[RMDB]
RNA sequence: GGGAACGACUCGAGUAGAGUCGAAAAGAUAUGGAUUAGUCUUUUGACGUUCAACCCAUCGGAAACGAUGGCAAGAACGAUAAGACUACUGUCCUAAGUCAAAGCCCUCCACUUCGGUGGAGGGCAAGUGUAUAGGCAGGUUCGCCUGCCUAUACACAAAAGAAACAACAACAACAAC
Reactivity to DMS in 0.01 (KOAc 150mM, MgCl2 10mM, bicine 150mM(pH8.5), 24C), signal-to-noise 4, nucleotides 027 to 126: g010a040u000a300u000g000g010a030u000u000a000g010u000c020u000u000u000u000g020a170c070g030u000u000c020a060a300c300c000c000a010u010c000g010g000a120a100a140c010g000a000u000g020g000c030a020a300g000a000a000c000g010a110u010a000a020g000a000c000u020a010c300u000g000u000c010c010u000a070a130g010u000c030a080a080a170g000c000c000c000u000c000c000a010c000u000u010c190g030g010u000g010g020a010g000g010g000c010a000a000
Reactivity to 2A3 in 0.01 (KOAc 150mM, MgCl2 10mM, bicine 150mM(pH8.5), 24C), signal-to-noise 3, nucleotides 027 to 126: g000a010u100a070u150g020g000a020u020u050a020g020u000c010u030u160u070u170g270a140c070g000u010u000c000a020a050c020c000c000a000u010c000g020g020a040a040a060c010g000a010u010g000g060c020a070a080g010a010a010c020g010a010u020a030a010g000a000c000u010a030c040u070g030u000c010c000u040a160a010g060u070c060a100a000a050g010c000c000c010u020c000c000a030c040u060u130c300g150g000u010g000g000a010g010g000g000c000a010a000
The record gives the reactivity of an RNA of 177 nucleotides to DMS and 2A3. It was measured as part of the RMDB library TTRDEL. For DMS the reverse transcriptase was MarathonRT. For 2A3 the reverse transcriptase was SuperScript II with manganese. Conditions: 150 mM KOAc, 10 mM MgCl2 and 150 mM bicine (pH 8.5), 24 C.